The record gives the reactivity of an RNA of 207 nucleotides to DMS and 2A3. The reactions ran in a buffer of 150 mM KOAc, 10 mM MgCl2 and 150 mM bicine (pH 8.5), at 24 C. High 2A3 reactivity points to a flexible backbone, as in loops and unpaired stretches. DMS adducts were read by reverse transcription with MarathonRT.
RNA sequence: GGGAACGACUCGAGUAGAGUCGAAAAGGAUGCGAGGUUGUCUCGUUAACGAUCCUCGCAAAAUAUAAGUGCCAACUUAAAGCGCACUGAUCUAAGUCUUGCUGCUUAAGCGCUUAGAUCUGUCGGUAUAGGGCUUGUCUUCGGCCCUGUAUCCGGCCGAAGAGACUUACUUCGGUAAGUCUCUUCGAAAAGAAACAACAACAACAAC
Reactivity to DMS in 0.01 (KOAc 150mM, MgCl2 10mM, bicine 150mM(pH8.5), 24C), signal-to-noise 3, nucleotides 027 to 156: g020g000a210u010g020c010g020a020g010g010u000u000g040u000c020u000c300g020u000u000a060a060c060g020a040u020c020c010u000c020g010c030a010a010a050a120u010a090u000a090a070g020u000g010c000c020a090a130c030u010u010a060a100a110g020c050g020c010a010c020u010g000a020u000c030u000a040a050g010u000c060u010u010g010c000u000g010c150u000u010a100a060g030c020g000c000u000u000a030g000a030u000c010u010g020u000c010g010g020u000a030u010a030g010g010g010c010u010u000g020u010c190u010u010c150g020g000c010c000c000u000g010u000a000u010c010c000g010g020c040
Reactivity to 2A3 in 0.01 (KOAc 150mM, MgCl2 10mM, bicine 150mM(pH8.5), 24C), signal-to-noise 6, nucleotides 027 to 156: g110g040a060u120g000c010g000a000g010g010u130u110g100u130c040u050c090g060u070u110a030a040c030g010a030u200c000c000u000c010g000c010a020a010a040a000u210a010u040a080a020g000u000g000c010c010a090a040c200u170u200a180a060a040g100c110g000c060a010c030u040g000a000u000c000u000a000a000g030u000c080u170u240g020c020u020g020c050u160u220a080a000g010c010g000c000u000u000a000g000a000u000c010u010g000u010c000g000g000u000a000u010a010g000g000g000c020u060u090g090u150c070u200u180c160g010g000c000c000c000u000g000u000a020u060c010c000g000g000c000